[RMDB]
RNA sequence: GGGAACGACUCGAGUAGAGUCGAAAAGAUAUGGAGAGCCCAGACUUGGAUUUACAUGACGAAUUCAUGAAGGUCGGAAACGACCUUCAUGAACUAUCAUGUUGUCAGUCUGAGGCUCUCCUAAGUCCUUAUGACACCAGUUCGCUGGUGUCAUAAGAAAAGAAACAACAACAACAAC
Reactivity to DMS in 0.01 (KOAc 150mM, MgCl2 10mM, bicine 150mM(pH8.5), 24C), signal-to-noise 2, nucleotides 027 to 126: g010a130u000a270u010g010g000a040g010a010g010c000c000c000a010g010a020c000u000u020g050g010a030u000u010u000a010c000a000u010g000a000c170g000a110a170u000u000c000a010u000g000a030a030g010g020u000c000g000g000a120a150a260c000g010a040c000c020u000u000c000a000u020g000a000a000c070u000a240u000c000a000u010g010u000u000g000u010c010a040g020u000c000u010g020a100g000g000c010u000c000u010c000c000u000a010a130g010u000c030
Chemical mapping of a 177-nucleotide RNA with DMS. Conditions: 150 mM KOAc, 10 mM MgCl2 and 150 mM bicine (pH 8.5), 24 C. It was measured as part of the RMDB library TTRINS. DMS adducts were read by reverse transcription with MarathonRT.